[RMDB]
Structure probing data (2A3) for a 207-nucleotide construct.
Conditions: 150 mM KOAc, 10 mM MgCl2 and 150 mM bicine (pH 8.5), 24 C.
Values cover nucleotides 27 to 156.
RNA sequence: GGGAACGACUCGAGUAGAGUCGAAAAGGUGCUCUGAAUGGAGUGCUCUACUGAGAUUAUAAAAUAGAAGGUAAGCUAUUAUCUCUUACAACAGGGCAGGGCUUGUUGGAAUAGGCGGUGAAGUCUAAAAACUACCUCACCUUCGGGUGAGGUAGAACCAUUGUCAGGUGUUCGCACCUGACAAUGGAAAAGAAACAACAACAACAAC
Reactivity to 2A3 in 0.01 (KOAc 150mM, MgCl2 10mM, bicine 150mM(pH8.5), 24C), signal-to-noise 2, nucleotides 027 to 156: g060g000u030g000c010u000c050u090g170a120a090u260g000g000a020g040u070g000c000u000c040u130a100c060u040g000a010g030a070u090u070a040u230a160a090a060a090u140a050g020a080a000g100g000u150a000a030g000c020u000a020u110u080a040u110c010u020c010u030u100a030c080a140a020c030a150g010g050g000c010a000g000g020g040c050u070u060g050u000u010g060g000a110a090u020a060g000g040c020g050g030u170g040a060a040g020u050c040u150a060a060a000a000a000c000u030a000c000c000u000c000a020c000c000u000u040c200g050g000g010u000g000a000g000g000u000a000g000a000a000